The data come from the RNA Mapping Database (RMDB), library OK2TRN. Chemical mapping of a 177-nucleotide RNA with DMS and 2A3. For DMS, 2,597 sequencing reads were counted. High 2A3 reactivity points to a flexible backbone, as in loops and unpaired stretches. For 2A3 the reverse transcriptase was SuperScript II with manganese. For 2A3, 1,987 sequencing reads were counted.
[RMDB]
RNA sequence: GGGAACGACUCGAGUAGAGUCGAAAAGGCGAUGGCCAUCCGCAACCGGUGCGCCAAUCAGGCGCUGCACGACUCGUGCGAUUGGCUGCUGAGCGGCCAGGGAAGCAUCGCCGUGUUCGAUGCUACCUGCUGAGUGCAUUUUCGAAUGCACUCAGCAAAAAGAAACAACAACAACAAC
Reactivity to DMS in 0.01 (KOAc 150mM, MgCl2 10mM, bicine 150mM(pH8.5), 24C), signal-to-noise 3, nucleotides 027 to 126: g010g020c080g010a130u010g010g020c010c010a150u000c020c090g010c020a030a110c040c000g020g010u000g020c010g010c010c000a100a150u010c260a190g020g010c000g000c030u000g000c000a020c060g000a100c200u000c110g000u000g000c010g000a070u000u010g020g020c020u000g000c030u000g000a070g000c100g010g000c020c020a090g010g020g000a150a070g020c010a020u000c010g020c040c060g020u000g000u000u000c000g010a020u000g000c000u000a120c020c050
Reactivity to 2A3 in 0.01 (KOAc 150mM, MgCl2 10mM, bicine 150mM(pH8.5), 24C), signal-to-noise 2, nucleotides 027 to 126: g140g000c050g090a080u070g030g060c000c000a030u010c000c010g000c000a030a000c030c000g070g000u070g000c040g000c030c000a030a140u300c150a080g010g000c030g000c030u070g010c020a030c070g250a270c110u140c270g010u040g000c010g060a100u070u130g040g000c030u030g020c020u030g030a020g090c090g050g050c030c000a020g030g010g010a090a030g000c010a000u000c000g050c070c060g020u040g010u060u080c020g040a020u000g070c000u020a050c000c000